This 177-nucleotide RNA was probed chemically with 2A3 and DMS.
Reactivities are given for positions 27 through 126.
The data come from the RNA Mapping Database (RMDB), library OK1LIB.
The RNA was probed in 150 mM KOAc, 10 mM MgCl2 and 150 mM bicine (pH 8.5) at 24 C.
For DMS the reverse transcriptase was MarathonRT.
For 2A3 the reverse transcriptase was SuperScript II with manganese.

RNA sequence: GGGAACGACUCGAGUAGAGUCGAAAACACACGACGAGCUGUGUUGGUCCAUCCAAGGCGAUCGGAGCAACGGGAAACCACGCAAUGCUCGCCACUCUUGGUCUUGAUGGUCAGGGUUCACGCUGCCGUCCGGUAAUCUUUUCGAAGAUUACCGGACAAAAGAAACAACAACAACAAC
Reactivity to 2A3 in 0.01 (KOAc 150mM, MgCl2 10mM, bicine 150mM(pH8.5), 24C), signal-to-noise 7, nucleotides 027 to 126: c070a010c020a020c050g090a020c040g010a040g020c050u020g010u020g030u090u030g030g040u000c030c000a010u020c050c030a080a070g070g020c060g060a080u110c120g110g050a080g030c030a130a300c050g020g000g060a120a090a050c030c040a090c050g010c020a050a060u080g000c000u000c010g040c000c010a040c010u100c010u040u080g080g000u040c010u060u110g040a120u110g030g020u030c030a030g060g040g000u050u080c050a060c140g020c050u030g010c020c040
Reactivity to DMS in 0.01 (KOAc 150mM, MgCl2 10mM, bicine 150mM(pH8.5), 24C), signal-to-noise 3, nucleotides 027 to 126: c030a040c020a030c050g000a150c210g000a100g010c210u010g000u000g010u000u010g000g020u000c010c030a190u020c060c160a100a100g030g010c010g000a090u010c060g030g050a300g030c000a120a080c130g010g000g010a250a040a120c020c030a180c300g010c080a000a110u030g000c030u000c000g000c020c000a010c160u030c050u000u010g040g000u020c050u000u000g000a140u010g000g000u000c080a030g000g000g010u010u050c030a090c070g000c030u030g040c090c070